RNA sequence: GGGAACGACUCGAGUAGAGUCGAAAAGACAAGCGCGCGAACGAACUUCUCGACAAGGGCGACCGCGCCGGGUACGCGGCGAUGCUCGAGCGGGCGGUCGCGAACCGGCGGGCGAGUGGGCGGCACGCCUUGCUGCAUUAUUCGUAAUGCAGCAAGGAAAAGAAACAACAACAACAAC
Reactivity to DMS in 0.01 (KOAc 150mM, MgCl2 10mM, bicine 150mM(pH8.5), 24C), signal-to-noise 8, nucleotides 027 to 126: g000a110c080a090a110g010c080g020c020g010c030g000a060a080c050g010a070a100c080u000u000c030u000c080g010a080c130a080a120g000g010g020c060g000a100c070c020g010c020g010c010c000g000g000g010u010a070c030g010c010g000g000c010g000a100u010g020c020u000c010g020a160g020c150g010g010g030c010g000g020u000c010g010c010g000a040a060c030c010g000g010c020g000g000g010c040g000a070g010u000g010g010g010c030g000g010c060a080c130g010
Reactivity to 2A3 in 0.01 (KOAc 150mM, MgCl2 10mM, bicine 150mM(pH8.5), 24C), signal-to-noise 5, nucleotides 027 to 126: g080a040c040a070a070g010c030g000c020g000c020g070a080a020c020g010a040a060c030u090u020c040u030c070g080a090c060a080a080g050g020g000c030g030a070c010c000g110c000g000c020c010g010g000g020u240a020c010g000c010g030g000c050g240a300u160g020c000u010c020g060a100g140c200g010g040g000c020g020g000u020c010g000c000g010a010a020c010c010g010g000c000g010g020g020c020g000a040g020u090g010g040g000c000g000g010c040a010c030g030